[RMDB]
An RNA of 177 nucleotides, treated with 2A3 and DMS and read out base by base. Values cover nucleotides 27 to 126. For 2A3 the reverse transcriptase was SuperScript II with manganese. DMS adducts were read by reverse transcription with MarathonRT. The RNA was probed in 150 mM KOAc, 10 mM MgCl2 and 150 mM bicine (pH 8.5) at 24 C.

RNA sequence: GGGAACGACUCGAGUAGAGUCGAAAAAAGCAGGGUGUGAGAGAAACUCUCUCCCAGCCGGUUCGCGCAGCCACCCUUUUCGACUCUACUCGGGUUAGCUGCGCGAAGUGGCUGGCGUUCCCCAGAACCUCAUGGAAUAGUUCGCUAUUCCAUGAGGAAAAGAAACAACAACAACAAC
Reactivity to 2A3 in 0.01 (KOAc 150mM, MgCl2 10mM, bicine 150mM(pH8.5), 24C), signal-to-noise 1, nucleotides 027 to 126: a010a000g240c080a030g000g000g000u020g010u040g020a060g020a000g060a100a220a120c030u030c000u010c020u060c070c010c000a000g000c010c020g010g000u040u030c020g020c020g000c040a010g000c000c010a010c010c000c030u070u050u050u080c020g000a010c000u040c000u060a010c000u010c000g020g020g000u000u010a010g000c010u000g000c000g020c010g060a040a050g300u030g030g010c000u010g000g020c010g000u000u000c000c000c000c000a010g040a100a030
Reactivity to DMS in 0.01 (KOAc 150mM, MgCl2 10mM, bicine 150mM(pH8.5), 24C), signal-to-noise 1, nucleotides 027 to 126: a110a090g010c180a060g000g010g000u000g010u000g010a100g020a120g000a130a160a100c110u010c030u010c060u020c090c020c000a000g010c000c000g000g020u000u010c040g020c010g030c000a010g010c000c040a050c010c030c020u010u000u000u000c020g000a000c000u000c000u000a000c000u000c000g000g000g010u000u000a030g000c000u000g010c000g010c010g000a040a020g000u010g010g010c000u000g000g000c000g020u000u000c000c010c020c130a170g000a140a110